[RMDB]
The data come from the RNA Mapping Database (RMDB), library RSTRND. An RNA of 207 nucleotides, treated with 2A3 and DMS and read out base by base. DMS (dimethyl sulfate) methylates the pairing face of unpaired adenines and cytosines. The RNA was probed in 150 mM KOAc, 10 mM MgCl2 and 150 mM bicine (pH 8.5) at 24 C. As a SHAPE reagent, 2A3 marks flexible, mostly unpaired nucleotides at the ribose 2'-OH. For DMS, 1,357 sequencing reads were counted. The 2A3 profile rests on 2,568 reads.
RNA sequence: GGGAACGACUCGAGUAGAGUCGAAAAGCGGGCAGAAAUGGUGGGUAAGCAUGCAGUGCGUCGGUGAUUUGCACUUUAAUCUCAGUUAUCAAAAUUUUAUCUGGCGAAACUAAUUACGCUCUUGCUGCUUAAUCGAAUCAUAGUAGAUUAGCUUAAUCAUAUAUUUCUGCUUCGGCAGAAAUAUAUGAAAAGAAACAACAACAACAAC
Reactivity to 2A3 in 0.01 (KOAc 150mM, MgCl2 10mM, bicine 150mM(pH8.5), 24C), signal-to-noise 4, nucleotides 027 to 156: g040c020g020g010g000c040a020g090a060a140a020u120g010g010u050g020g000g000u040a020a020g030c030a030u090g010c020a010g010u020g000c010g010u030c040g020g030u030g030a060u040u010u080g040c030a020c000u090u070u080a080a080u020c030u010c050a050g040u080u040a080u080c010a050a120a120a120u140u250u150u140a080u110c050u030g030g000c000g040a070a040a000c020u040a060a070u130u100a030c030g010c010u030c030u050u100g050c040u020g000c000u050u080a010a000u030c030g010a040a010u070c090a070u100a120g040u010a000g010a030u030u010a010g000c000u040u060a050a020u020
Reactivity to DMS in 0.01 (KOAc 150mM, MgCl2 10mM, bicine 150mM(pH8.5), 24C), signal-to-noise 1, nucleotides 027 to 156: g000c040g030g030g000c020a110g020a020a050a090u010g000g020u000g010g100g000u000a110a070g000c020a080u000g000c100a050g040u020g010c010g030u000c000g000g030u010g000a060u000u000u000g070c070a040c030u000u000u000a010a060u000c000u000c030a130g000u000u010a070u000c050a110a060a220a070u000u000u000u000a000u020c110u010g010g010c030g040a120a090a300c100u000a040a110u000u010a170c070g000c050u000c100u000u000g030c010u000g030c020u000u010a000a030u000c030g020a140a150u010c140a110u000a180g020u000a100g000a030u000u000a130g000c070u000u000a050a230u000